RNA sequence: GGGAACGACUCGAGUAGAGUCGAAAACCUUAUCCGAAAGGAUAAGGAGCAACCGAAAGGUUGCAAAGCAGCCAACGAUAGCACGCCGGAAAAGACGGGGCUGCCGAGCCUAUGCGAAACCUCGAAAGAGGAAGCAUAGGGUCGAACGUGCAUCGAAGGAUGCGGGAUGGUUCGCCAUCCUGCAUCCAAAAGAAACAACAACAACAAC
Reactivity to 2A3 in 0.01 (KOAc 150mM, MgCl2 10mM, bicine 150mM(pH8.5), 24C), signal-to-noise 2, nucleotides 027 to 156: c000c000u000u000a010u020c000c000g030a060a020a000g000g000a000u000a000a000g000g000a060g010c000a000a000c000c000g030a070a030a010g000g000u000u010g010c000a000a070a010g000c010a000g000c000c000a070a030c070g030a000u030a020g010c000a010c000g000c000c000g000g020a070a010a010a000g110a030c000g000g010g000g000c000u020g000c000c000g000a010g090c000c000u010a000u000g000c000g050a150a030a040c000c020u000c000g020a030a020a020g000a000g000g000a010a010g000c000a000u000a010g010g000g030u000c010g010a010a000c000g000u010g000c000a010u030c010g030a070a020
Reactivity to DMS in 0.01 (KOAc 150mM, MgCl2 10mM, bicine 150mM(pH8.5), 24C), signal-to-noise 1, nucleotides 027 to 156: c000c000u000u010a010u020c000c000g000a300a160a210g040g000a020u000a000a000g030g020a110g020c030a050a090c000c020g040a110a080a200g030g060u010u000g010c030a040a040a040g020c020a060g000c020c010a120a180c050g000a120u000a100g030c000a070c020g000c000c000g060g000a110a120a090a160g000a020c000g000g060g020g020c000u000g070c010c020g000a140g070c010c000u060a010u020g010c020g000a120a250a200c000c000u000c000g030a240a080a300g020a020g010g050a030a090g000c030a020u000a000g000g010g020u000c000g010a030a000c000g060u020g010c000a070u000c010g030a040a110

Conditions: 150 mM KOAc, 10 mM MgCl2 and 150 mM bicine (pH 8.5), 24 C. Chemical mapping of a 207-nucleotide RNA with 2A3 and DMS. 2A3 is a SHAPE reagent: it acylates the 2'-hydroxyl of flexible nucleotides of all four kinds. Values are in units of 0.01, from 0 to 300, in steps of 10. The data come from the RNA Mapping Database (RMDB), library OK3TST. 2A3 adducts were read by reverse transcription with SuperScript II with manganese.